Chemical mapping of a 207-nucleotide RNA with 2A3 and DMS. Reactivities are given for positions 27 through 156. The DMS profile rests on 2,252 reads.
RNA sequence: GGGAACGACUCGAGUAGAGUCGAAAAUUUCGCUUGCCUAUUUAGGCAUACUUCUCAGGAUGGCGCGUUGCAGUCCAACAAGAUCCAGGGACUGUACAGAAUUUUCCUAUACCUCGAGUCGGGUUUGAAAACGUUAGGCACUUCGGUGCCUAACGAAGGAAUGUUUACAGUUCGCUGUAAACAUUCCAAAAGAAACAACAACAACAAC
Reactivity to 2A3 in 0.01 (KOAc 150mM, MgCl2 10mM, bicine 150mM(pH8.5), 24C), signal-to-noise 4, nucleotides 027 to 156: u040u060u040c020g010c050u050u070g030c020c000u130a240u220u210u260a020g000g020c000a010u060a030c040u110u070c090u020c120a070g120g020a090u110g020g040c040g010c060g130u120u040g000c020a020g000u000c020c010a070a080c070a170a130g140a210u120c070c080a060g010g000g000a000c000u010g010u010a020c010a010g080a020a010u000u020u000u010c000c000u030a040u030a090c030c040u010c000g000a000g000u000c010g000g030g010u080u050u080g030a070a070a000a000c010g000u000u000a000g000g000c000a000c000u030u030c280g080g000u000g000c000c000u000a000a000c000g000a000a000
Reactivity to DMS in 0.01 (KOAc 150mM, MgCl2 10mM, bicine 150mM(pH8.5), 24C), signal-to-noise 1, nucleotides 027 to 156: u000u000u000c000g000c080u000u000g030c010c000u000a300u000u000u000a020g020g030c040a050u000a020c040u000u000c080u000c030a140g050g010a060u010g000g000c160g020c180g050u030u000g040c050a000g000u000c020c060a130a220c030a120a300g000a120u010c030c050a200g010g000g000a010c100u000g030u000a040c050a130g000a040a020u000u000u000u000c000c010u000a090u000a080c120c010u000c000g030a070g040u000c020g000g010g080u000u000u000g000a060a080a050a120c010g000u000u000a020g000g040c000a020c010u020u000c300g040g040u000g000c030c010u000a000a000c000g000a020a060
The 2A3 profile rests on 2,920 reads.